RNA sequence: GGGAACGACUCGAGUAGAGUCGAAAACUGCUGGUUGCGACGCCGCCAUGCGGGUCUGUCUCGGCUCUUGUGUGUCUUUCACUGCAUCGGGACUGCUCUGUGAUGUAGCCAUUCGGCAACAGGAGCGGAGGUGAGUGGACUUCGGUCCACUCACCUCAAAAGAAACAACAACAACAAC
Reactivity to 2A3 in 0.01 (KOAc 150mM, MgCl2 10mM, bicine 150mM(pH8.5), 24C), signal-to-noise 1, nucleotides 027 to 126: c010u000g000c030u030g000g000u010u090g000c030g090a050c150g040c050c010g000c000c130a140u110g000c090g020g030g000u050c190u090g160u000c020u010c050g120g000c040u000c000u030u000g000u010g020u000g000u020c000u000u120u140c110a110c080u010g020c000a010u030c010g000g000g100a180c080u140g010c050u050c000u040g160u080g140a020u090g050u060a010g000c000c000a070u070u080c000g040g000c000a000a000c000a020g040g030a000g050c000g010